An RNA of 177 nucleotides, treated with 2A3 and DMS and read out base by base. In probing experiments dimethyl sulfate is read out at A N1 and C N3, which are open when not base-paired. 2A3 adducts were read by reverse transcription with SuperScript II with manganese. The 2A3 profile rests on 2,208 reads.

RNA sequence: GGGAACGACUCGAGUAGAGUCGAAAAUUGUUGUUCAGCCAGUUGGUGUUGUAGACACUGAGUGGGGUAACAUGUUAACGGGCAUUGCUGCACGUCCUCCACCAGGUGAACAGUUUAAGCACCUCGUGCUAAUAGAGCAGUUCGCUGCUCUAUUAGCAAAAGAAACAACAACAACAAC
Reactivity to 2A3 in 0.01 (KOAc 150mM, MgCl2 10mM, bicine 150mM(pH8.5), 24C), signal-to-noise 2, nucleotides 027 to 126: u010u010g030u040u000g020u030u040c060a050g060c050c020a040g060u070u060g030g010u000g040u090u040g070u040a020g020a020c000a040c030u040g040a050g100u030g000g000g000g020u060a110a030c050a120u150g050u120u170a080a010c010g010g010g000c030a040u030u260g080c100u080g000c020a000c010g000u020c010c000u000c010c000a000c000c000a010g000g040u050g010a020a040c050a030g010u020u030u030a020a000g000c000a000c010c010u020c020g010u020
Reactivity to DMS in 0.01 (KOAc 150mM, MgCl2 10mM, bicine 150mM(pH8.5), 24C), signal-to-noise 2, nucleotides 027 to 126: u010u010g010u000u000g000u000u000c090a120g020c040c070a120g010u000u000g010g010u000g040u010u000g020u000a040g010a110c010a110c020u000g000a140g010u010g000g000g000g020u010a110a070c160a080u010g020u010u000a100a050c050g000g010g060c060a110u000u000g010c190u000g000c010a020c020g030u010c150c020u010c010c020a010c020c030a020g040g020u000g020a050a060c240a050g010u000u000u000a070a090g000c040a030c010c010u000c210g010u000